[RMDB]
RNA sequence: GGGAACGACUCGAGUAGAGUCGAAAACUCGGUUACUUCAUACCGUGCUUGCAAAGGCUGAGUUAUGCUGUUCUGCACGCAUGGUUUGGAGAGAGUGGUGCAAUGUCUGUGGCAUAAAAGAUGUUGUCAGCCAAUCAGUUCGCUGAUUGGAAAAGAAACAACAACAACAAC
Reactivity to DMS in 0.01 (KOAc 150mM, MgCl2 10mM, bicine 150mM(pH8.5), 24C), signal-to-noise 8, nucleotides 027 to 129: c000u020c050g000g000u030u040a080c040u000u000c030a040u000a050c010c000g000u020g000c000u020u020g040c000a030a080a250g010g040c010u010g010a180g060u080u080a010u080g000c000u020g020u060u030c170u030g000c010a020c080g030c000a020u000g010g020u030u010u000g000g010a030g030a040g020a000g000u030g000g040u040g020c020a000a000u020g000u040c050u010g010u040g000g040c000a080u050a050a060a060a060g020a090u040g030u030u020g010u010c050a120g010
Reactivity to 2A3 in 0.01 (KOAc 150mM, MgCl2 10mM, bicine 150mM(pH8.5), 24C), signal-to-noise 9, nucleotides 027 to 129: c000u010c020g050g030u100u140a070c010u000u000c000a010u010a030c000c000g000u000g000c000u010u020g000c000a010a060a070g010g000c010u100g090a140g300u300u170a140u250g020c010u030g150u200u080c060u040g000c000a000c020g000c000a010u000g000g000u010u020u000g000g000a020g000a000g000a000g010u010g000g030u050g010c000a000a010u010g030u020c080u020g010u070g000g000c010a010u090a090a150a010a020g060a050u090g000u010u010g040u030c020a020g030
Chemical mapping of a 170-nucleotide RNA with DMS and 2A3. As a SHAPE reagent, 2A3 marks flexible, mostly unpaired nucleotides at the ribose 2'-OH. The RNA was probed in 150 mM KOAc, 10 mM MgCl2 and 150 mM bicine (pH 8.5) at 24 C.